This 207-nucleotide RNA was probed chemically with 2A3. For 2A3 the reverse transcriptase was SuperScript II with manganese.

RNA sequence: GGGAACGACUCGAGUAGAGUCGAAAAAAGCAUAAGGAGCAUACCGGGGCGGAUGAGGACCUCGUUAAAAACGUCCACUUUGUAAUUGGCAACGAUUACGCACUUGCAGCUUAAUUAAGCAGCACGAUCAACCUUGUGGUGGUUCCGCACUUGGAUUGUUUGGGUCCAACUUCGGUUGGACCCAAACAAAAGAAACAACAACAACAAC
Reactivity to 2A3 in 0.01 (KOAc 150mM, MgCl2 10mM, bicine 150mM(pH8.5), 24C), signal-to-noise 1, nucleotides 027 to 156: a000a000g080c070a070u120a060a020g060g010a030g000c060a030u050a100c100c000g000g010g000g000c040g020g020a050u020g030a020g000g010a030c000c000u010c050g030u040u140a060a100a010a000a000c030g000u010c040c000a040c100u030u050u280g020u110a030a000u040u000g090g000c030a070a000c000g040a080u000u050a030c020g030c080a020c010u010u070g020c020a030g000c010u050u050a170a150u080u030a270a000g030c070a000g000c000a020c000g070a100u080c020a020a110c000c010u010u010g000u020g000g070u030g020g000u040u080c010c030g050c050a050c070u020u000g080g030a060u060u010